[RMDB]
RNA sequence: GGGAACGACUCGAGUAGAGUCGAAAAACGUCCGAUCCUUCUAUCACAGCCCCUGCUGCCGAGAACAGCUCGGCGAGGGCGGUCAUUCCCGUGCCCUUUAUGCCCACGAAGAAAAGCCGGGCGGAUGGGUAGUUUGACUAUUCGUAGUCAAACUACCAAAAGAAACAACAACAACAAC
Reactivity to 2A3 in 0.01 (KOAc 150mM, MgCl2 10mM, bicine 150mM(pH8.5), 24C), signal-to-noise 1, nucleotides 027 to 126: a020c030g010u030c020c000g020a100u040c030c020u060u090c080u160a300u150c090a040c040a150g130c020c000c000c010u060g080c020u110g000c000c010g040a030g070a200a120c090a140g130c000u000c010g000g000c030g000a010g030g030g010c000g000g030u010c010a040u030u090c000c000c000g030u050g080c000c000c000u090u190u050a090u120g030c000c070c010a080c080g020a000a080g030a060a130a020a000g090c110c060g000g010g040c040g000g010a000u080g050
Reactivity to DMS in 0.01 (KOAc 150mM, MgCl2 10mM, bicine 150mM(pH8.5), 24C), signal-to-noise 2, nucleotides 027 to 126: a150c090g010u000c010c000g010a050u000c040c000u000u010c050u000a080u010c050a230c060a140g000c090c030c020c070u010g010c100u000g010c010c020g000a050g010a200a170c300a200g040c000u000c000g020g000c010g000a080g000g020g050c050g000g000u020c090a120u000u000c010c000c000g000u000g000c020c000c010u000u010u000a080u000g000c020c020c020a140c180g000a050a110g020a050a160a070a100g030c110c060g010g000g010c020g000g000a080u000g000
Description:
Conditions: 150 mM KOAc, 10 mM MgCl2 and 150 mM bicine (pH 8.5), 24 C. Chemical mapping of a 177-nucleotide RNA with 2A3 and DMS. DMS adducts were read by reverse transcription with MarathonRT. As a SHAPE reagent, 2A3 marks flexible, mostly unpaired nucleotides at the ribose 2'-OH. Values cover nucleotides 27 to 126. Values are in units of 0.01, from 0 to 300, in steps of 10.